Annotation:
Structure probing data (DMS and 2A3) for a 177-nucleotide construct. It was measured as part of the RMDB library TTRDEL. The RNA was probed in 150 mM KOAc, 10 mM MgCl2 and 150 mM bicine (pH 8.5) at 24 C. For DMS the reverse transcriptase was MarathonRT. The DMS profile rests on 5,398 reads.
[RMDB]
RNA sequence: GGGAACGACUCGAGUAGAGUCGAAAAGAUAUGGAGCAGGUAAGCUCCAACAGCUCGGAAACGAGACAUGGAGUUUACUGCUCCUAAGUCAAAGGUAAUAGAGACACUUCGGUGUCUCUAUUACCAAGUUAUCCAAGUACUUCGGUACUUGGAUAACAAAAGAAACAACAACAACAAC
Reactivity to DMS in 0.01 (KOAc 150mM, MgCl2 10mM, bicine 150mM(pH8.5), 24C), signal-to-noise 4, nucleotides 027 to 126: g000a040u000a300u000g010g000a010g030c000a010g010g010u010a030a010g010c000u000c010c000a010a060c260a190g000c010u000c000g000g000a080a100a200c020g000a010g000a030c070a170u000g000g000a020g000u000u010u000a020c010u000g010c000u000c000c000u010a010a040g010u000c020a070a130a110g000g010u000a020a000u000a000g000a020g000a020c000a010c000u000u010c180g030g010u000g010u000c000u000c000u000a000u000u000a000c000c000a010a020
Reactivity to 2A3 in 0.01 (KOAc 150mM, MgCl2 10mM, bicine 150mM(pH8.5), 24C), signal-to-noise 3, nucleotides 027 to 126: g020a000u070a020u130g000g010a000g000c020a010g120g270u070a020a000g010c000u000c010c000a000a030c040a000g000c010u000c010g020g020a070a070a040c010g000a010g010a010c000a080u130g000g000a000g000u000u010u000a000c010u000g000c010u000c000c000u000a040a010g040u000c030a120a070a080g000g000u000a010a000u000a000g000a000g000a010c010a000c030u090u170c300g000g000u010g000u000c000u010c000u000a000u000u000a000c000c010a000a000